[RMDB]
Structure probing data (2A3 and DMS) for a 177-nucleotide construct. It was measured as part of the RMDB library OK2TST.

RNA sequence: GGGAACGACUCGAGUAGAGUCGAAAAGGAUCAAUGACAUGAGAUCCCUGAUUGCGGCAAGUCUUUCGCUUCGUAAAUUCAUGGUUGAACUACUGAUGGAAGCUAAGAAAGGACGGGGGACAAAAGGGAAGAUAACAUUUUUCGAAAUGUUAUCUUCAAAAGAAACAACAACAACAAC
Reactivity to 2A3 in 0.01 (KOAc 150mM, MgCl2 10mM, bicine 150mM(pH8.5), 24C), signal-to-noise 7, nucleotides 027 to 126: g030g000a010u030c030a030a100u170g090a100c040a070u110g020a060g000a110u020c000c000c020u080g090a180u080u190g060c040g040g000c070a090a050g030u000c000u010u050u020c030g010c000u010u010c010g080u080a060a110a150u060u030c020a030u090g090g010u050u140g090a130a070c040u060a020c040u080g020a020u040g060g010a010a010g000c030u060a110a040g030a090a040a000g070g010a010c010g000g010g000g010g000a010c040a020a130a020a010g170g040
Reactivity to DMS in 0.01 (KOAc 150mM, MgCl2 10mM, bicine 150mM(pH8.5), 24C), signal-to-noise 9, nucleotides 027 to 126: g010g010a050u000c030a060a110u010g010a120c170a110u000g010a190g010a060u000c010c010c040u010g000a120u000u010g010c070g000g010c100a080a090g010u000c010u000u000u000c090g010c010u000u000c010g010u000a040a040a080u010u000c020a030u000g010g010u000u010g000a090a140c080u000a050c200u000g000a030u000g010g000a020a010g010c030u010a070a090g010a040a050a050g000g000a040c040g010g000g000g000g000a140c190a040a050a080a080g010g010
Reactivities are given for positions 27 through 126. For 2A3 the reverse transcriptase was SuperScript II with manganese.